RNA sequence: GGGAACGACUCGAGUAGAGUCGAAAAGAUAUGGAUUGAGCUUAGUACGACUAUUAAUCGGAAACGAUUAACGAAUCGUACAAGCAAUGAUGUCCUAAGUCAAAAGGGGCAAGUUCGCUUGCCCCAACAAUGUCUUGCACUUCGGUGCAAGACAUUGAAAAGAAACAACAACAACAAC
Reactivity to DMS in 0.01 (KOAc 150mM, MgCl2 10mM, bicine 150mM(pH8.5), 24C), signal-to-noise 3, nucleotides 027 to 126: g010a050u000a300u010g010g010a030u000u010g010a080g020c010u000u000a110g010u000a000c000g000a000c070u000a270u000u000a000a000u000c000g000g000a170a140a160c000g010a020u010u000a000a000c120g030a040a120u000c000g020u000a010c010a020a020g010c000a120a080u020g000a070u000g010u000c000c000u010a060a210g000u000c040a080a060a130a120g010g010g010g000c000a000a010g020u000u010c260g020c000u000u000g000c000c000c000c000a010a040
Reactivity to 2A3 in 0.01 (KOAc 150mM, MgCl2 10mM, bicine 150mM(pH8.5), 24C), signal-to-noise 2, nucleotides 027 to 126: g020a010u060a030u130g020g000a020u040u070g040a020g030c000u000u060a080g000u000a010c020g010a000c040u060a020u050u000a000a000u000c020g000g000a070a100a040c000g010a000u030u000a000a000c060g080a190a300u000c000g000u020a000c000a010a000g030c010a030a300u200g010a030u080g020u040c000c000u020a170a000g090u070c050a000a000a130a110g000g000g000g000c000a010a000g010u040u170c290g030c200u020u020g040c010c000c030c000a020a020

An RNA of 177 nucleotides, treated with DMS and 2A3 and read out base by base.
For DMS, 2,456 sequencing reads were counted.
The data come from the RNA Mapping Database (RMDB), library TTRDEL.
The 2A3 profile rests on 2,304 reads.
2A3 adducts were read by reverse transcription with SuperScript II with manganese.
Values cover nucleotides 27 to 126.
For DMS the reverse transcriptase was MarathonRT.